Structure probing data (DMS and 2A3) for a 177-nucleotide construct.

RNA sequence: GGGAACGACUCGAGUAGAGUCGAAAAGAUAUGGACAAUCUAAGGGAGGCUAUCGGAAACGAUGAGCCGAAGAACUUAGAGUUGUCCUAAGUCAAAAGUGGAGUUGGUGUUCGCACCAACUCCACAACUUCAUUAAGUCGUUCGCGACUUAAUGAAGAAAAGAAACAACAACAACAAC
Reactivity to DMS in 0.01 (KOAc 150mM, MgCl2 10mM, bicine 150mM(pH8.5), 24C), signal-to-noise 3, nucleotides 027 to 126: g000a080u000a300u000g000g000a020c000a020a040u000c010u000a000a010g000g000g000a120g000g020c000u000a040u000c000g000g000a120a090a130c000g000a020u000g000a030g040c010c000g000a050a150g000a110a170c000u000u000a000g000a040g000u000u000g010u000c000c000u010a020a100g010u010c050a090a060a090a140g010u000g010g000a020g020u000u000g000g000u010g030u000u000c250g000c010a020c000c010a000a000c000u000c000c000a010c010a000a080
Reactivity to 2A3 in 0.01 (KOAc 150mM, MgCl2 10mM, bicine 150mM(pH8.5), 24C), signal-to-noise 2, nucleotides 027 to 126: g020a010u080a060u180g000g010a010c000a010a010u000c010u010a000a010g090g000g030a020g000g000c010u010a010u010c010g010g020a070a020a010c020g000a030u180g300a020g020c010c040g000a020a000g000a010a000c010u010u010a000g020a030g130u020u020g000u000c000c000u010a070a020g060u020c040a030a050a030a130g010u000g020g000a000g010u000u000g000g010u030g040u110u220c290g050c050a000c000c000a000a000c010u000c000c000a000c000a000a010
The DMS profile rests on 2,940 reads. The RNA was probed in 150 mM KOAc, 10 mM MgCl2 and 150 mM bicine (pH 8.5) at 24 C.